An RNA of 207 nucleotides, treated with 2A3 and read out base by base. 2A3 adducts were read by reverse transcription with SuperScript II with manganese. Source: RMDB library ARCHII, as collected in RNAgym. Reactivities are given for positions 27 through 156. Conditions: 150 mM KOAc, 10 mM MgCl2 and 150 mM bicine (pH 8.5), 24 C.

RNA sequence: GGGAACGACUCGAGUAGAGUCGAAAAAGGGGUCGGCCUCGUAAAAACGCACAAGCCAAUAACUGGCAAAGAAAACAACAACUUCGCUCUAGCUGCAUAAGCUAAGCGGUCUCUCCUCUCCAUCGCCCAUGUGGAGUGGCUGAGACUCAACUUUAGUCGGAAUAGCUUAGUUCGCUAAGCUAUUCCGAAAAGAAACAACAACAACAAC
Reactivity to 2A3 in 0.01 (KOAc 150mM, MgCl2 10mM, bicine 150mM(pH8.5), 24C), signal-to-noise 2, nucleotides 027 to 156: a000g050g020g000g000u190c040g040g030c000c000u000c030g010u040a050a040a030a040a000c050g020c030a070c040a050a130g000c000c040a020a150u130a230a090c190u050g000g000c020a000a130a000g060a010a070a020a030c080a030a000c000a030a110c040u180u110c040g000c010u030c050u050a000g000c000u010g000c100a100u040a300a010g010c000u000a000a000g000c010g000g020u000c000u010c000u000c000c000u000c000u040c000c000a020u030c040g040c010c000c000a030u100g000u010g030g000a000g000u000g030g000c090u000g000a000g030a000c000u020c000a100a170c000u060u070u080a070g090u050